Chemical mapping of a 177-nucleotide RNA with DMS and 2A3. The DMS profile rests on 5,056 reads. The RNA was probed in 150 mM KOAc, 10 mM MgCl2 and 150 mM bicine (pH 8.5) at 24 C. The data come from the RNA Mapping Database (RMDB), library TTRINS.
RNA sequence: GGGAACGACUCGAGUAGAGUCGAAAAGAUAUGGAGGAGAACUACAGUGACGCUCAAUGAUGUUGGUCCCAAUAUCGGAAACGAUAUUGGGACCAAUUGAGAGCGAGAACACUGCUCCUCCUAAGUCGAUACAAGUUCUGUUCGCAGAACUUGUAUCAAAAGAAACAACAACAACAAC
Reactivity to DMS in 0.01 (KOAc 150mM, MgCl2 10mM, bicine 150mM(pH8.5), 24C), signal-to-noise 4, nucleotides 027 to 126: g020a090u000a300u000g010g010a000g010g000a030g010a130a050c080u020a300c000a020g020u010g030a220c010g000c010u010c000a180a190u020g010a080u000g010u010u000g000g020u000c000c000c000a010a000u000a000u000c000g010g000a130a070a230c020g010a010u000a000u000u000g010g010g000a000c010c000a000a010u000u000g000a130g010a000g010c020g010a060g010a100a100c010a000c010u000g000c000u000c010c000u000c000c000u000a010a050g010u000c110
Reactivity to 2A3 in 0.01 (KOAc 150mM, MgCl2 10mM, bicine 150mM(pH8.5), 24C), signal-to-noise 1, nucleotides 027 to 126: g130a090u190a110u240g000g000a030g010g000a000g040a180a060c190u300a070c290a030g010u010g070a160c000g000c010u000c000a000a300u200g030a030u110g010u050u000g000g000u000c000c030c000a000a000u010a010u010c000g060g060a050a120a120c030g000a000u000a000u000u000g030g040g060a010c030c000a000a000u000u010g000a000g000a000g000c020g000a080g000a010a000c010a010c000u010g020c050u000c000c010u000c000c010u000a040a040g000u050c080